[RMDB]
RNA sequence: GGGAACGACUCGAGUAGAGUCGAAAAGCAUAUGGCUUCGGCCAUAUGCAAAGACAAGAGGAGGAAGGUGGCUUGUCAAAUAACCACGAAUAAAAAUAAAAAAAAUCUGACGGUUCGCCGUCAGAAAGAGAGGUAAAUACUUCGGUAUUUACCUCUCAAAAGAAACAACAACAACAAC
Reactivity to DMS in 0.01 (KOAc 150mM, MgCl2 10mM, bicine 150mM(pH8.5), 24C), signal-to-noise 1, nucleotides 027 to 126: g010c000a000u010a000u010g010g000c000u000u000c160g030g000c010c040a000u000a010u000g010c000a000a060a110g000a010c030a020a030g000a060g000g000a160g040g000a050a140g000g020u000g010g020c010u000u000g000u010c030a160a100a060u010a050a100c090c050a030c190g000a050a140u000a060a100a030a060a050u050a060a070a010a010a060a120a070a130u000c000u020g010a000c010g020g000u000u010c120g020c020c000g020u000c000a000g000a010a070a060
Reactivity to 2A3 in 0.01 (KOAc 150mM, MgCl2 10mM, bicine 150mM(pH8.5), 24C), signal-to-noise 1, nucleotides 027 to 126: g000c000a010u010a000u020g020g000c030u040u060c270g110g000c000c000a000u000a000u000g000c000a000a040a000g010a010c000a000a040g000a000g230g060a100g080g040a230a040g050g050u030g040g050c010u000u060g000u000c000a000a000a260u030a030a030c080c020a010c070g060a070a030u250a100a100a040a000a000u300a140a020a020a010a050a000a000a020u000c020u000g000a000c000g020g080u020u080c280g000c030c000g000u000c000a000g000a000a000a020

The data come from the RNA Mapping Database (RMDB), library M2PK50.
This 177-nucleotide RNA was probed chemically with DMS and 2A3.
For 2A3, 829 sequencing reads were counted.
DMS adducts were read by reverse transcription with MarathonRT.